[RMDB]
Annotation: Structure probing data (2A3 and DMS) for a 177-nucleotide construct.

RNA sequence: GGGAACGACUCGAGUAGAGUCGAAAAAAUCAAGAAUGAAGAUAAUAGGUUUUUCUUUAACGUUCGCGCAUAAUAAUUCCGCGUCUUUUCAAGGUUACGUUCGUUAAAAGUUAGGUCCUUCAAUCUUGUAAUAGUAAAUGUUCGCAUUUACUAUUACAAAAGAAACAACAACAACAAC
Reactivity to 2A3 in 0.01 (KOAc 150mM, MgCl2 10mM, bicine 150mM(pH8.5), 24C), signal-to-noise 3, nucleotides 027 to 126: a020a000u200c060a050a020g050a090a040u170g020a040a030g050a130u150a190a040u090a300g040g010u000u000u040u010u000c000u000u020u010a020a000c010g000u020u030c010g000c000g000c040a010u060a160a060u100a100a070u300u060c060c020g000c010g020u010c030u080u120u090u070c120a040a020g000g020u040u030a030c030g000u000u030c000g020u000u010a040a090a000a010g000u020u020a040g000g040u000c000c020u020u020c020a060a080u000c030u050u030
Reactivity to DMS in 0.01 (KOAc 150mM, MgCl2 10mM, bicine 150mM(pH8.5), 24C), signal-to-noise 3, nucleotides 027 to 126: a060a040u010c050a050a070g000a090a050u000g000a070a010g000a090u010a050a120u010a160g000g000u000u000u000u000u000c020u000u000u000a020a020c010g000u000u000c020g030c110g020c090a070u010a110a060u000a080a120u010u010c120c080g000c150g010u000c080u000u010u000u010c130a050a130g010g000u010u010a080c050g010u000u000c010g020u000u000a030a020a030a050g000u000u000a040g020g000u000c050c010u000u000c050a030a050u000c050u000u000

Conditions: 150 mM KOAc, 10 mM MgCl2 and 150 mM bicine (pH 8.5), 24 C. For 2A3 the reverse transcriptase was SuperScript II with manganese. It was measured as part of the RMDB library RFMREP.